Conditions: 150 mM KOAc, 10 mM MgCl2 and 150 mM bicine (pH 8.5), 24 C. The record gives the reactivity of an RNA of 177 nucleotides to 2A3 and DMS. For DMS, 2,204 sequencing reads were counted. For 2A3 the reverse transcriptase was SuperScript II with manganese. Values cover nucleotides 27 to 126. Source: RMDB library OK1LIB, as collected in RNAgym. The 2A3 profile rests on 1,937 reads.

[RMDB]
RNA sequence: GGGAACGACUCGAGUAGAGUCGAAAACAACCCUGCGUUCGAUUGCAAACGAGGAAUAGAUGACAGACACGACGUUGCCGCCUGACGACUCGCUCGACCGGAUCGAACCGGUUGACAUCCAGCAGGAACUCCCAAGACUGUUCGCAGUCUUGGGAGUAAAAGAAACAACAACAACAAC
Reactivity to 2A3 in 0.01 (KOAc 150mM, MgCl2 10mM, bicine 150mM(pH8.5), 24C), signal-to-noise 3, nucleotides 027 to 126: c050a030a030c000c020c010u010g030c000g050u030u110c040g070a130u000u250g040c050a090a080a020c020g020a030g090g080a040a070u060a180g140a090u160g070a030c020a010g040a000c010a000c040g100a040c040g050u090u090g060c020c000g000c000c040u030g010a090c000g020a040c020u010c070g010c010u000c000g020a010c000c020g010g010a020u100c040g010a080a030c040c010g010g000u010u010g020a000c010a040u060c010c020a060g060c020a040g080g010a030
Reactivity to DMS in 0.01 (KOAc 150mM, MgCl2 10mM, bicine 150mM(pH8.5), 24C), signal-to-noise 2, nucleotides 027 to 126: c120a110a190c000c020c070u010g040c130g060u020u000c090g020a090u000u000g000c100a090a090a110c130g000a150g040g000a040a130u000a080g000a070u020g020a070c050a030g020a150c090a150c070g000a110c120g060u000u010g000c000c100g040c050c020u000g000a100c040g000a000c000u020c110g010c080u020c000g080a020c040c030g020g000a040u020c180g000a110a240c020c030g000g000u010u000g020a070c120a090u000c100c020a070g000c050a090g000g000a230